[RMDB]
RNA sequence: GGGAACGACUCGAGUAGAGUCGAAAAGGUCAUCCUUCACAGGAUCGUGUGGAAGUCCUGCUCGGGGCGGAAGCAUUAAAACCAUUCGAGCUAGUCAAUGCGUGGCGUGUCUCUCCGCAGCUUGUUGUGUAUGAGAGUGGAUUCGUCCACUCUCAAAUACUCUAGUAGAGUUCGCUCUACUAGAGUAAAAAGAAACAACAACAACAAC
Reactivity to 2A3 in 0.01 (KOAc 150mM, MgCl2 10mM, bicine 150mM(pH8.5), 24C), signal-to-noise 2, nucleotides 027 to 156: g030g030u090c040a040u020c050c040u170u280c070a070c020a050g070g070a150u060c090g010u080g010u040g040g050a070a040g030u050c000c020u020g080c020u050c120g030g000g000g000c020g010g000a020a000g000c020a020u070u150a040a050a020a040c000c000a010u050u100c070g020a030g060c110u120a020g130u100c060a050a050u030g040c050g120u020g020g010c050g020u110g090u030c050u020c000u060c070c010g040c030a020g010c030u020u020g000u010u000g020u000g050u040a060u130g000a000g000a000g000u000g000g020a030u060u060c160g050u000c020c000a010c000u000c010u000c000a010a010a000
Reactivity to DMS in 0.01 (KOAc 150mM, MgCl2 10mM, bicine 150mM(pH8.5), 24C), signal-to-noise 1, nucleotides 027 to 156: g000g000u000c050a120u000c020c010u000u000c070a100c060a070g010g000a010u000c060g050u010g000u010g030g010a190a110g030u000c000c000u000g050c110u010c070g010g000g000g000c090g000g010a220a230g040c020a100u020u000a030a130a110a070c000c010a120u000u000c050g000a150g040c040u000a120g060u000c090a110a070u010g010c000g010u000g010g020c120g010u010g000u010c020u000c090u000c010c020g000c020a060g000c110u000u000g000u000u000g020u000g040u000a110u010g000a030g000a000g010u020g000g010a110u000u020c300g020u000c010c000a010c000u000c000u010c000a000a030a090